[RMDB]
The record gives the reactivity of an RNA of 207 nucleotides to 2A3 and DMS. Conditions: 150 mM KOAc, 10 mM MgCl2 and 150 mM bicine (pH 8.5), 24 C.

RNA sequence: GGGAACGACUCGAGUAGAGUCGAAAAACGAGGCCAUGCCUACUACGGUAGGCACGGCCUCGAAUUACGUUCAUCUACUUAAUCGUAGACGCAUCAAUACAUCAUUCAUGGAACGGGGGAUGGUGAAACUAGAAUCAAACGUUCGCGUUUGAUUCAACUACUAACGUUAGUUCGCUAACGUUAGUAGAAAAGAAACAACAACAACAAC
Reactivity to 2A3 in 0.01 (KOAc 150mM, MgCl2 10mM, bicine 150mM(pH8.5), 24C), signal-to-noise 7, nucleotides 027 to 156: a000c010g000a000g000g000c010c000a010u020g000c040c000u010a000c000u020a020c220g130g000u000a000g020g000c000a000c000g000g010c010c000u000c000g000a000a000u020u060a020c000g000u010u020c000a020u000c020u000a010c010u070u180a100a040u180c050g010u010a000g020a030c010g000c010a090u160c090a100a130u110a230c010a000u020c000a010u010u020c010a010u040g070g000a020a000c010g010g000g000g000g000a000u010g010g030u010g030a090a010a010c130u120a090g010a000a000u000c000a000a000a000c010g030u060u060c280g000c000g080u000u020u000g000a000u000u010c000a000a000
Reactivity to DMS in 0.01 (KOAc 150mM, MgCl2 10mM, bicine 150mM(pH8.5), 24C), signal-to-noise 3, nucleotides 027 to 156: a190c020g000a020g020g020c000c030a030u000g000c000c000u000a010c020u000a130c300g060g010u000a000g010g020c000a000c000g000g020c000c000u000c010g000a010a030u000u010a170c040g000u000u000c000a260u000c010u000a010c010u000u000a090a130u010c290g000u010a030g040a030c030g000c070a150u000c090a090a110u000a090c040a050u000c000a050u000u000c060a040u020g000g010a070a060c040g030g020g010g020g010a070u010g020g030u000g010a080a100a100c080u000a170g010a030a000u000c000a010a010a010c000g050u000u000c300g070c010g010u000u000u020g000a030u000u010c010a040a150
The data come from the RNA Mapping Database (RMDB), library M2RFPK. The DMS profile rests on 6,319 reads. For DMS the reverse transcriptase was MarathonRT.